[RMDB]
RNA sequence: GGGAACGACUCGAGUAGAGUCGAAAAGAAAUGUCUAGUCCCGUGGUCUCACUUCCAAAAGGAGGAGCGGGGGGACUUGGAACACGAGGGGACCAGUCCAGUCCGUGGGAACUACCCCGGAACUCCCAACGUUUCGACUUCGGUCGAAACAAAAGAAACAACAACAACAAC
Reactivity to DMS in 0.01 (KOAc 150mM, MgCl2 10mM, bicine 150mM(pH8.5), 24C), signal-to-noise 5, nucleotides 027 to 129: g030a020a040a000u070g000u030c040u010a060g000u020c000c010c070g000u020g000g000u060c010u030c040a080c050u000u000c000c000a120a080a180a300g020g040a020g040g020a000g000c100g070g060g040g030g010g000a040c020u000u000g000g000a080a030c070a060c010g050a090g000g000g000g000a080c060c080a040g020u020c040c060a070g010u040c010c110g000u110g020g010g040a100a070c160u080a180c060c020c010c050g030g020a040a150c000u000c000c000c040a130a070c250
Reactivity to 2A3 in 0.01 (KOAc 150mM, MgCl2 10mM, bicine 150mM(pH8.5), 24C), signal-to-noise 6, nucleotides 027 to 129: g030a000a120a020u100g020u030c030u020a010g050u020c020c000c010g120u120g010g070u070c010u000c040a160c030u090u000c050c030a100a110a030a060g040g000a010g030g000a020g010c060g050g050g000g010g000g000a010c000u050u100g030g020a040a030c050a000c070g030a070g020g020g000g000a030c030c020a000g000u000c010c000a000g030u030c040c050g160u220g000g000g000a060a060c040u180a140c040c010c010c000g010g020a030a030c050u040c000c000c000a030a020c040
Overview:
Chemical mapping of a 170-nucleotide RNA with DMS and 2A3. High 2A3 reactivity points to a flexible backbone, as in loops and unpaired stretches. For 2A3, 10,606 sequencing reads were counted. The RNA was probed in 150 mM KOAc, 10 mM MgCl2 and 150 mM bicine (pH 8.5) at 24 C. For DMS, 12,233 sequencing reads were counted. Values cover nucleotides 27 to 129.